An RNA of 177 nucleotides, treated with 2A3 and read out base by base. The reactions ran in a buffer of 150 mM KOAc, 10 mM MgCl2 and 150 mM bicine (pH 8.5), at 24 C. For 2A3, 762 sequencing reads were counted.
RNA sequence: GGGAACGACUCGAGUAGAGUCGAAAAUACAGCCAGCUGACCAUACGUCAAUCGCCUUGGUAUAUCCUUGGUAACUCAACAUUAUUUCCGGAGCUCUAUACCAUCUAGUGGCCACGUACUCCGUCAAGGGUGCUAUGGAGUUCGCUCCAUAGCACCCAAAAGAAACAACAACAACAAC
Reactivity to 2A3 in 0.01 (KOAc 150mM, MgCl2 10mM, bicine 150mM(pH8.5), 24C), signal-to-noise 2, nucleotides 027 to 126: u190a020c060a050g030c000c000a020g010c070u000g010a010c000c000a060u030a050c000g060u050c040a050a140u090c060g000c010c010u030u050g030g000u070a090u050a090u250c040c030u050u040g010g020u070a090a010c020u020c110a010a070c000a240u080u160a060u060u250u060c080c000g080g010a020g010c000u000c000u080a100u040a160c000c000a040u090c000u020a070g020u040g090g000c000c000a040c020g010u060a120c010u000c020c010g090u050c030a060a040